[RMDB]
RNA sequence: GGGAACGACUCGAGUAGAGUCGAAAAAGUGAUCAUCAGUGAUAAAAACGCAGACUGGGAGAAACGUGUGGAUGCUCUCAAGAAGAUCAGGGCAUUGCUCAUUCUCAGCUAUCACACUCAGCCGCAGCCAGUAUGUUGUCUUCGGACAACAUACUGGAAAAGAAACAACAACAACAAC
Reactivity to DMS in 0.01 (KOAc 150mM, MgCl2 10mM, bicine 150mM(pH8.5), 24C), signal-to-noise 2, nucleotides 027 to 126: a120g040u010g000a070u010c090a050u010c090a080g020u000g000a060u010a030a030a090a090a100c180g020c090a060g010a090c030u010g010g010g000a030g000a100a040a060c150g000u000g000u010g010g020a010u000g000c000u000c010u000c160a080a080g030a090a100g010a110u010c160a050g010g000g000c030a040u000u010g000c000u000c070a080u000u000c000u000c020a060g000c060u010a040u000c050a030c000a050c040u000c040a060g010c040c020g030c140a080g010
Reactivity to 2A3 in 0.01 (KOAc 150mM, MgCl2 10mM, bicine 150mM(pH8.5), 24C), signal-to-noise 2, nucleotides 027 to 126: a010g070u040g010a020u030c020a020u020c040a040g030u000g050a050u130a100a160a020a000a000c150g000c060a000g080a170c030u020g030g060g010a030g030a050a150a030c070g020u040g030u030g190g010a000u030g000c000u000c000u030c050a050a000g170a090a020g010a110u130c060a060g000g010g000c010a000u000u060g010c000u020c030a030u080u010c000u010c000a010g000c020u060a030u070c000a010c020a020c020u040c020a030g070c020c010g050c100a020g010